RNA sequence: GGGAACGACUCGAGUAGAGUCGAAAAGAUAUGGAAUCCAUCGAUCAAGACCCGUUAACCUGGUCGGAAACGACCAGGAACGCUUGGGAGGAUUCCUAAGUCAAACGAAACCCUUCGGGGUUUCGAACAUUGAGCUUAGCUUCGGCUAAGCUCAAUGAAAAGAAACAACAACAACAAC
Reactivity to DMS in 0.01 (KOAc 150mM, MgCl2 10mM, bicine 150mM(pH8.5), 24C), signal-to-noise 1, nucleotides 027 to 126: g020a120u010a300u010g000g020a050a010u000c000c000a280u010c290g000a120u030c020a030a010g010a200c190c220c160g020u000u000a150a170c020c000u010g000g010u010c010g000g050a020a040a150c000g000a010c010c000a030g020g020a000a020c010g000c090u040u000g000g000g050a020g030g000a000u000u030c010c000u000a030a020g030u010c070a080a160a300c020g010a000a010a020c000c000c000u000u000c220g010g000g000g000u000u000u010c000g000a040a250

An RNA of 177 nucleotides, treated with DMS and read out base by base. It was measured as part of the RMDB library TTRDES. Conditions: 150 mM KOAc, 10 mM MgCl2 and 150 mM bicine (pH 8.5), 24 C.